Structure probing data (2A3 and DMS) for a 177-nucleotide construct.

[RMDB]
RNA sequence: GGGAACGACUCGAGUAGAGUCGAAAAGGGCGUCGAACAGCAGUUAGUUACAGGAGACAUUGCCCGAUUGGCUCUCGCACCGCCCCUUCUAGUUGGUGUGGUCGAGGAAGUCGAUGCCGCCUGUAGAACCCCUACGUAGUUUCGACUACGUAGGGGUAAAAGAAACAACAACAACAAC
Reactivity to 2A3 in 0.01 (KOAc 150mM, MgCl2 10mM, bicine 150mM(pH8.5), 24C), signal-to-noise 2, nucleotides 027 to 126: g030g010g000c010g000u040c040g060a130a100c000a040g130c030a070g070u100u230a060g010u090u060a130c000a010g030g000a060g040a020c080a140u080u170g020c060c030c000g000a020u030u050g010g020c010u000c000u020c050g000c060a030c000c000g010c030c050c010c010u110u090c120u140a260g080u100u170g000g000u070g000u000g030g010u000c000g000a000g000g060a050a030g040u020c000g000a010u090g060c020c010g010c020c020u000g020u030a050g030a120
Reactivity to DMS in 0.01 (KOAc 150mM, MgCl2 10mM, bicine 150mM(pH8.5), 24C), signal-to-noise 3, nucleotides 027 to 126: g010g010g000c020g030u010c080g010a070a120c150a110g000c090a130g000u000u010a140g010u010u000a030c040a040g010g010a130g010a060c070a060u000u020g010c020c010c020g010a160u010u000g010g010c030u000c020u000c000g020c240a010c010c000g010c000c010c010c010u000u010c180u010a090g000u010u010g030g010u000g000u000g000g010u000c000g000a030g000g010a080a040g010u000c010g000a010u000g020c010c030g010c010c000u000g010u000a030g010a120
For DMS the reverse transcriptase was MarathonRT. Conditions: 150 mM KOAc, 10 mM MgCl2 and 150 mM bicine (pH 8.5), 24 C. Reactivities are given for positions 27 through 126. For 2A3, 1,671 sequencing reads were counted.